[RMDB]
RNA sequence: GGGAACGACUCGAGUAGAGUCGAAAAGAUAUGGACUCCUAGUCUGGGCUUCUUGGAUUUAUGGUCACAGUUAUCGGAAACGAUAAUCACAGCCAUUGUCAGAAGUCCAGACUAGGAGUCCUAAGUCCUAGUAAUAUGCCUUCGGGCAUAUUACUAGAAAAGAAACAACAACAACAAC
Reactivity to DMS in 0.01 (KOAc 150mM, MgCl2 10mM, bicine 150mM(pH8.5), 24C), signal-to-noise 2, nucleotides 027 to 126: g000a130u010a300u010g000g020a000c020u000c000c000u010a020g000u000c010u000g010g040g000c000u020u010c000u010u020g020g010a060u010u020u000a000u010g010g030u010c070a180c300a300g000u000u000a000u000c010g010g010a140a130a300c000g030a010u000a010a010u000c070a220c300a300g000c000c000a000u000u000g010u010c010a060g000a010a000g020u000c000c010a010g000a000c000u000a010g000g000a000g020u000c000c010u000a020a060g000u010c030

This 177-nucleotide RNA was probed chemically with DMS. Values cover nucleotides 27 to 126. The RNA was probed in 150 mM KOAc, 10 mM MgCl2 and 150 mM bicine (pH 8.5) at 24 C. It was measured as part of the RMDB library TTRINS.